Notes
Structure probing data (2A3) for a 177-nucleotide construct. It was measured as part of the RMDB library OK1LIB.
[RMDB]
RNA sequence: GGGAACGACUCGAGUAGAGUCGAAAAGCCAGGUGGACUGGAGUAAUGUCGCCGGGAGCGUGAGCAUUGGUCUUAUUUUCCGUGGAAAACAUGUGGAAGACGACUGCGACGUUGUGGUAUCUGUGUUGGUGAGUAGGGUAUUCGUACCCUACUCACCAAAAGAAACAACAACAACAAC
Reactivity to 2A3 in 0.01 (KOAc 150mM, MgCl2 10mM, bicine 150mM(pH8.5), 24C), signal-to-noise 1, nucleotides 027 to 126: g000c000c000a000g020g050u060g110g140a130c060u000g280g000a120g030u030a170a300u040g060u000c000g000c000c000g000g070g000a040g000c070g150u040g060a010g040c010a040u160u160g040g000u000c000u030u090a100u100u000u000u210c000c030g000u100g010g060a120a120a300a120c030a030u100g010u220g180g030a070a000g030a000c000g000a000c000u040g000c000g030a040c010g070u070u010g060u060g050g030u060a160u000c000u000g250u000g110u210u000